[RMDB]
RNA sequence: GGGAACGACUCGAGUAGAGUCGAAAAUGGAGACCUGAUUAUGUUGAGAUGUCCGACACACACGUCGUGAUGUCUGAUCUCACAUAGUCUGGCAAUACGUCUCUCUGUCGUACUAGAGUGCGACGUAUCGUAUGUCGUCCUUCGGGACGACAUACGAAAAAGAAACAACAACAACAAC
Reactivity to DMS in 0.01 (KOAc 150mM, MgCl2 10mM, bicine 150mM(pH8.5), 24C), signal-to-noise 1, nucleotides 027 to 126: u000g000g000a070g000a140c000c000u000g010a000u000u010a000u000g000u000u050g000a050g000a000u000g000u000c110c240g000a010c000a050c030a050c000a090c300g000u090c120g000u020g000a080u020g000u000c000u010g020a040u050c000u000c000a000c000a030u000a000g020u000c010u000g000g000c190a050a070u050a000c040g000u000c000u000c050u000c140u040g020u100c110g000u050a130c050u020a080g000a140g060u030g000c000g000a000c000g000u030a040
Reactivity to 2A3 in 0.01 (KOAc 150mM, MgCl2 10mM, bicine 150mM(pH8.5), 24C), signal-to-noise 4, nucleotides 027 to 126: u230g070g000a060g000a030c000c000u010g010a010u030u020a010u020g180u200u160g010a000g000a000u110g170u100c040c030g000a000c000a000c000a010c010a020c130g300u300c100g000u070g070a270u020g020u000c000u010g010a010u000c000u000c000a000c000a000u000a030g010u000c020u010g010g000c030a030a050u140a100c020g030u000c000u010c000u000c040u090g010u020c020g030u000a040c040u050a150g080a040g240u010g010c000g000a000c010g000u080a180